[RMDB]
RNA sequence: GGGAACGACUCGAGUAGAGUCGAAAAAAGAUAUGGAUCCUAGGGAGCGUCAAUGCAAGCGAAGAACACGAGUCGGAAACGACUCGUGGGAGCUUGUGAACGCGAAGAACUAGGAUCCUAAGUCAAACAUUCCAUUGUGGUUCGCCACAAUGGAAUGAAAAGAAACAACAACAACAAC
Reactivity to 2A3 in 0.01 (KOAc 150mM, MgCl2 10mM, bicine 150mM(pH8.5), 24C), signal-to-noise 1, nucleotides 027 to 126: a010a000g050a030u050a040u110g000g000a010u000c000c000u000a050g000g000g000a110g010c000g040u010c020a070a030u090g000c030a010a000g000c000g270a300a010g000a110a030c030a000c000g000a010g000u010c020g010g030a050a050a070c010g000a010c000u000c000g020u000g000g020g000a020g000c000u010u000g000u030g180a040a000c000g010c020g090a240a030g020a000a020c000u000a000g060g000a010u000c000c010u000a000a000g000u030c000a000a010a120
Reactivity to DMS in 0.01 (KOAc 150mM, MgCl2 10mM, bicine 150mM(pH8.5), 24C), signal-to-noise 2, nucleotides 027 to 126: a080a040g000a060u010a300u010g000g010a000u020c000c000u010a000g010g010g000a130g000c030g010u000c030a080a070u010g030c010a020a020g000c000g000a150a150g030a150a260c000a020c000g000a020g000u000c000g000g000a100a100a180c000g010a040c000u000c000g010u000g000g000g000a060g000c010u010u010g000u000g000a040a000c000g010c000g000a120a140g000a110a170c000u000a010g000g000a010u000c000c000u000a010a090g000u000c030a160a110a230

This 177-nucleotide RNA was probed chemically with 2A3 and DMS. For 2A3 the reverse transcriptase was SuperScript II with manganese. For DMS the reverse transcriptase was MarathonRT. The DMS profile rests on 2,089 reads.